[RMDB]
RNA sequence: GGGAACGACUCGAGUAGAGUCGAAAAAAUUUGUUAUACCUGCUCUACAGCAUGCAUUUAUGAAACAUAAGGGCGGUGAUUCAACUGACUUCAUAGCCCUCAUUAUGGCUUAUGGCAAUUGCACAUUAAAGUCACAACUUCGGUUGUGACAAAAGAAACAACAACAACAAC
Reactivity to DMS in 0.01 (KOAc 150mM, MgCl2 10mM, bicine 150mM(pH8.5), 24C), signal-to-noise 3, nucleotides 027 to 129: a060a090u030u050u010g010u010u040a080u040a100c080c030u040g080c100u010c110u040a060c070a070g020c090a080u030g040c040a060u040u010u050a030u080g000a000a130a140c110a060u040a000a000g010g080g020c030g000g000u050g010a060u050u000c030a190a000c150u060g060a060c140u000u040c040a040u000a180g040c010c040c140u030c130a090u030u040a080u000g030g010c040u010u050a060u000g130g000c040a060a080u050u050g030c090a000c120a170u000u000a040a030a010
Reactivity to 2A3 in 0.01 (KOAc 150mM, MgCl2 10mM, bicine 150mM(pH8.5), 24C), signal-to-noise 4, nucleotides 027 to 129: a000a000u170u120u030g060u090u020a040u040a070c020c010u050g010c020u040c010u080a050c070a010g000c010a020u070g010c010a010u000u040u080a050u120g110a120a040a040c030a000u050a080a020g000g000g010c000g010g000u030g000a060u010u010c020a150a120c150u170g040a000c070u060u010c020a000u010a040g010c000c000c000u000c000a040u050u070a000u070g030g010c020u060u020a040u040g020g000c000a050a040u080u050g020c050a010c010a060u060u140a070a140a010
This 170-nucleotide RNA was probed chemically with DMS and 2A3. Values cover nucleotides 27 to 129. For DMS the reverse transcriptase was MarathonRT. It was measured as part of the RMDB library 15KLIB. The RNA was probed in 150 mM KOAc, 10 mM MgCl2 and 150 mM bicine (pH 8.5) at 24 C. Reactivities are rounded to 0.1 and cut off at 0 and 3.